[RMDB]
RNA sequence: GGGAACGACUCGAGUAGAGUCGAAAAUCAAGAGUACAACUCCAAACUAUGAUUGUACUCGGAGUUUAUCAUAGUCGACGAAGUCGAUUACAUGAUACUCAUCUGUCAUGUAUUGGAGUUGACAGAAGAUAGUAUUCACAUUCGUGUGAGUACUAUCAAAAGAAACAACAACAACAAC
Reactivity to DMS in 0.01 (KOAc 150mM, MgCl2 10mM, bicine 150mM(pH8.5), 24C), signal-to-noise 9, nucleotides 027 to 126: u040c060a110a120g000a130g010u020a060c010a010a010c010u000c010c020a010a020a080c090u040a040u010g000a030u000u000g010u040a040c160u030c180g010g000a030g000u010u040u020a010u000c010a030u000a030g010u000c010g000a010c010g020a120a120g020u000c000g000a020u000u000a040c190a060u000g000a010u000a020c010u000c040a180u030c040u000g000u000c000a010u000g010u000a120u010u000g000g000a030g010u000u000g010a060c030a090g000a090a090
Reactivity to 2A3 in 0.01 (KOAc 150mM, MgCl2 10mM, bicine 150mM(pH8.5), 24C), signal-to-noise 9, nucleotides 027 to 126: u120c060a070a030g070a040g100u140a190c000a000a000c000u000c000c000a020a020a020c050u130a030u030g010a030u020u070g080u190a090c090u040c120g030g000a010g000u130u160u060a000u000c000a000u010a020g010u000c000g000a020c070g270a250a020g020u000c000g000a030u010u030a060c050a070u020g000a000u000a010c000u000c010a100u030c020u030g000u000c000a010u010g030u050a300u080u010g000g000a000g000u000u000g010a010c010a010g120a070a010